Record summary
Chemical mapping of a 207-nucleotide RNA with 2A3.
[RMDB]
RNA sequence: GGGAACGACUCGAGUAGAGUCGAAAACGGCGCCGUCUGUGACGGUCUUGGCGCCCAACUUCUUCCAGCCCCGCCGUCAACGAUGCCGCUCGCCUGGGUGAGUGCCAGUCCGAUCAGCGAUGCACUGGAGGUCGAUCUGGGUGGGGCCGUCUCCGUCCCAAGCCCAUGUUUUCGAACAUGGGCUUGGAAAAGAAACAACAACAACAAC
Reactivity to 2A3 in 0.01 (KOAc 150mM, MgCl2 10mM, bicine 150mM(pH8.5), 24C), signal-to-noise 1, nucleotides 027 to 156: c020g020g000c020g000c010c020g050u100c110u100g110u070g030a040c020g030g000u000c030u020u090g010g010c000g010c030c000c000a080a090c030u170u150c000u080u000c010c010a000g000c010c010c000c010g010c020c000g030u040c010a000a020c030g000a020u070g050c000c000g020c020u070c020g040c000c020u070g000g050g050u010g010a110g000u100g050c010c010a040g020u070c040c050g060a140u130c020a000g100c000g030a050u070g010c050a010c040u010g030g020a050g060g270u080c030g010a060u000c040u030g010g000g020u080g060g000g000g000c020c000g010u010c020u070c000c010g030u150c040